RNA sequence: GGGAACGACUCGAGUAGAGUCGAAAAAGACAUACGUUCGCGUAUGUCUGACGGGCACCUGACCCUAAGGAAAUGCUCUAUGACAGGACACACUGAUUGUCAUACCUCGAGAUUUCGAUCUCGAGAACUAGUGUGAUGGUUUCGACCAUCACACUAGAAAAGAAACAACAACAACAAC
Reactivity to 2A3 in 0.01 (KOAc 150mM, MgCl2 10mM, bicine 150mM(pH8.5), 24C), signal-to-noise 4, nucleotides 027 to 126: a000g000a000c000a010u010a010c000g020u010u070c240g000c000g120u000a000u000g000u000c000u000g010a020c020g010g000g000c030a030c030c010u050g110a150c000c000c020u020a040a000g030g020a030a140a090u100g000c000u010c010u040a040u040g040a030c010a020g060g020a060c040a020c010a020c220u090g060a130u080u040g020u030c010a010u060a110c020c000u000c020g010a010g010a000u070u080u130c190g060a020u000c010u000c000g000a010g010a010a020
Reactivity to DMS in 0.01 (KOAc 150mM, MgCl2 10mM, bicine 150mM(pH8.5), 24C), signal-to-noise 5, nucleotides 027 to 126: a010g010a010c010a000u000a000c000g000u000u030c170g020c020g020u010a000u000g010u000c010u000g000a100c170g010g010g020c020a070c020c020u000g000a150c020c010c010u020a070a050g010g010a080a090a090u000g000c030u000c030u010a040u000g010a030c020a030g000g000a150c130a120c210a090c160u010g000a110u000u000g000u000c020a050u000a060c190c010u000c000g000a010g010a030u000u000u020c170g000a010u000c000u000c010g000a010g010a060a120